[RMDB]
RNA sequence: GGGAACGACUCGAGUAGAGUCGAAAAAAUAUAUCUGUUCAAUAGGAAGCUCAGCUAUAUACUCUUCAUAAGUUUUAUGGGGGUAGCCUGAUAGUGUCAUCUCUCCCAAGCAGGCCAACCAUGGCAGACUGCACUAGUAUUUCGAUACUAGUGCAGUAAAAGAAACAACAACAACAAC
Reactivity to 2A3 in 0.01 (KOAc 150mM, MgCl2 10mM, bicine 150mM(pH8.5), 24C), signal-to-noise 2, nucleotides 027 to 126: a020a000u110a000u010a020u040c040u050g020u030u100c080a150a090u070a180g140g040a070a010g020c020u030c080a000g050c050u010a000u010a020u020a250c010u010c000u200u070c050a070u080a250a130g090u020u060u160u260a050u040g000g000g000g000g000u020a020g000c000c000u040g020a050u030a090g070u110g040u070c020a070u020c040u000c010u010c040c010c000a000a000g060c040a010g020g120c010c010a040a000c030c040a040u040g000g000c010a030g070
Reactivity to DMS in 0.01 (KOAc 150mM, MgCl2 10mM, bicine 150mM(pH8.5), 24C), signal-to-noise 3, nucleotides 027 to 126: a060a040u000a040u000a040u000c000u000g000u000u000c030a120a150u010a130g000g020a160a130g000c040u000c040a040g000c040u000a050u000a080u000a050c040u000c020u000u010c030a050u010a020a100g010u010u010u000u010a030u010g010g010g010g010g040u000a040g010c060c030u000g000a090u000a050g020u000g000u010c040a040u000c040u000c100u000c000c000c020a070a110g010c080a050g010g000c020c020a060a110c130c080a100u000g000g000c030a110g020